[RMDB]
RNA sequence: GGGAACGACUCGAGUAGAGUCGAAAAUCUAUGCGCUUCGGCGCAUAGAAAAUAAAAUCAGCGGUAAUUCGAGCCGUAAUAUUACCGCUGAACGCCUCGAAAAAACUCUUAAGUUCGCUUAAGAGAACAUGUAUGUUGAGUUCGCUCAACAUACAUGAAAAGAAACAACAACAACAAC
Reactivity to 2A3 in 0.01 (KOAc 150mM, MgCl2 10mM, bicine 150mM(pH8.5), 24C), signal-to-noise 3, nucleotides 027 to 126: u010c010u000a010u010g020c000g030c020u020u050c210g110g010c000g040c000a000u000a000g000a000a000a000a000u040a000a020a010a070u020c000a010g000c000g000g000u010a000a000u040u090c100g070a080g200c140c060g070u010a000a090u070a010u080u010a000c010c000g010c000u020g000a000a010c010g060c000c000u080c050g030a040a050a070a100a150a160c010u000c010u010u000a020a010g010u040u090c220g080c100u000u000a000a000g000a000g000a010a010
Reactivity to DMS in 0.01 (KOAc 150mM, MgCl2 10mM, bicine 150mM(pH8.5), 24C), signal-to-noise 2, nucleotides 027 to 126: u010c000u000a000u010g010c000g020c000u000u010c190g070g000c000g020c000a010u000a000g000a010a050a060a090u000a070a090a100a080u000c000a000g010c000g000g000u010a000a000u000u010c140g000a110g000c110c140g010u000a090a050u000a060u000u010a010c000c000g000c000u010g000a000a040c150g010c010c000u010c210g030a000a050a060a080a080a120c000u010c000u000u000a000a010g000u010u010c230g030c010u000u010a000a000g010a010g000a060a110

The record gives the reactivity of an RNA of 177 nucleotides to 2A3 and DMS. The DMS profile rests on 2,035 reads. It was measured as part of the RMDB library M2PK50.